The record gives the reactivity of an RNA of 177 nucleotides to 2A3 and DMS.
DMS adducts were read by reverse transcription with MarathonRT.
The RNA was probed in 150 mM KOAc, 10 mM MgCl2 and 150 mM bicine (pH 8.5) at 24 C.
For 2A3, 2,392 sequencing reads were counted.
RNA sequence: GGGAACGACUCGAGUAGAGUCGAAAACUCCGAACCCGUCCAUGCCGAGGGCAUGCGGAGAUUCGCCGCCACCUUCGCCGGCGUCGGACUUGCCCCCACGGCCCUGGGUUCGGGCUAUGGCCUGGCCACGUCCCGUAAAUUUCGAUUUACGGGACGUAAAAGAAACAACAACAACAAC
Reactivity to 2A3 in 0.01 (KOAc 150mM, MgCl2 10mM, bicine 150mM(pH8.5), 24C), signal-to-noise 2, nucleotides 027 to 126: c020u020c010c000g010a000a010c000c010c000g050u120c080c020a090u180g030c000c000g000a050g000g030g030c030a080u250g040c060g060g030a030g030a180u070u000c000g020c010c000g020c020c030a040c020c070u210u180c110g090c180c060g010g020c000g010u010c000g000g040a040c010u020u030g000c010c010c000c000c000a080c010g010g000c010c010c040u070g000g010g000u010u000c010g000g000g000c010u090a110u110g070g000c040c130u100g040g040c020c030
Reactivity to DMS in 0.01 (KOAc 150mM, MgCl2 10mM, bicine 150mM(pH8.5), 24C), signal-to-noise 3, nucleotides 027 to 126: c150u000c000c010g000a020a000c010c000c000g010u010c070c170a130u000g010c000c020g000a120g010g010g010c110a080u010g030c100g020g020a070g000a190u010u000c040g000c050c000g000c020c030a150c110c120u000u020c150g020c170c130g000g000c010g010u000c010g010g000a080c030u000u000g010c020c180c020c020c070a110c030g030g010c000c110c120u000g000g000g000u000u000c010g020g000g080c100u000a070u010g040g020c050c050u000g010g000c030c040